[RMDB]
RNA sequence: GGGAACGACUCGAGUAGAGUCGAAAAGAUAUGGACAUGACAGCGAUAAGCGUUUCGGAAACGAGGGCGCUUUUGACGCUGCAAUGUGUCCUAAGUCAAAAUCAAGGAUAGUUCGCUAUCCUUGAAAGUGUAAAACCGUGUUCGCACGGUUUUACACAAAAGAAACAACAACAACAAC
Reactivity to 2A3 in 0.01 (KOAc 150mM, MgCl2 10mM, bicine 150mM(pH8.5), 24C), signal-to-noise 2, nucleotides 027 to 126: g020a000u030a040u050g030g000a010c000a000u130g090a190c010a000g010c030g300a300u080a290a000g000c000g000u000u000u060c020g000g020a030a020a020c020g000a060g050g140g030c030g010c010u040u060u070u170g070a040c020g010c000u000g010c020a010a140u300g020u020g010u060c000c000u000a000a020g020u010c010a000a050a000a300u050c010a000a000g010g000a010u010a000g020u040u010c070g000c140u000a000u000c000c000u000u000g000a020a000a000
Reactivity to DMS in 0.01 (KOAc 150mM, MgCl2 10mM, bicine 150mM(pH8.5), 24C), signal-to-noise 2, nucleotides 027 to 126: g010a010u000a240u000g010g010a010c000a050u000g000a120c010a020g030c000g020a150u000a050a030g000c030g020u010u000u010c010g000g010a050a050a110c010g010a050g000g030g000c000g020c010u000u000u010u020g010a130c050g050c000u000g020c110a050a050u000g000u010g000u000c000c000u010a060a120g000u000c040a100a090a090a170u000c000a010a000g000g000a010u000a010g010u010u010c300g020c000u000a010u000c000c000u000u000g000a010a010a070
An RNA of 177 nucleotides, treated with 2A3 and DMS and read out base by base. Conditions: 150 mM KOAc, 10 mM MgCl2 and 150 mM bicine (pH 8.5), 24 C. DMS (dimethyl sulfate) methylates the pairing face of unpaired adenines and cytosines. Source: RMDB library TTRDEL, as collected in RNAgym. For 2A3 the reverse transcriptase was SuperScript II with manganese. For DMS, 1,476 sequencing reads were counted.